[RMDB]
RNA sequence: GGGAACGACUCGAGUAGAGUCGAAAAGCUCAUCGAGAUGGUCUCCUCCCGGCUCAAGACGCUCAAGGGGGAAGGGGCUUAUAAGGGCAAGUUCAGCGCCCUCAACCACUUCUUUGGCUACGAGGCGCUCCUUGGUGAUAUUCGUAUCACCAAGGAGAAAAGAAACAACAACAACAAC
Reactivity to DMS in 0.01 (KOAc 150mM, MgCl2 10mM, bicine 150mM(pH8.5), 24C), signal-to-noise 3, nucleotides 027 to 126: g020c020u000c010a110u000c040g010a040g030a100u010g020g000u000c020u000c010c010u000c020c020c040g020g020c050u000c050a070a090g010a120c140g010c010u020c040a100a130g000g000g010g010g020a070a010g010g010g010g010c120u000u010a090u000a130a070g020g000g010c020a120a110g010u000u010c180a120g010c150g020c010c000c000u000c080a050a090c020c020a060c140u000u000c060u010u030u000g010g000c020u020a100c230g010a070g000g010c040g010
Reactivity to 2A3 in 0.01 (KOAc 150mM, MgCl2 10mM, bicine 150mM(pH8.5), 24C), signal-to-noise 2, nucleotides 027 to 126: g020c010u020c030a040u020c030g050a030g020a140u040g020g020u010c020u010c030c000u010c010c020c000g040g000c010u020c080a050a050g100a080c060g020c010u080c110a060a080g050g000g020g020g020a030a080g030g000g020g000c030u190u090a070u070a180a040g000g010g000c050a060a040g030u140u220c040a040g030c030g010c060c000c010u000c020a040a030c010c000a040c010u100u000c000u070u060u080g050g000c010u050a040c070g040a020g060g000c000g010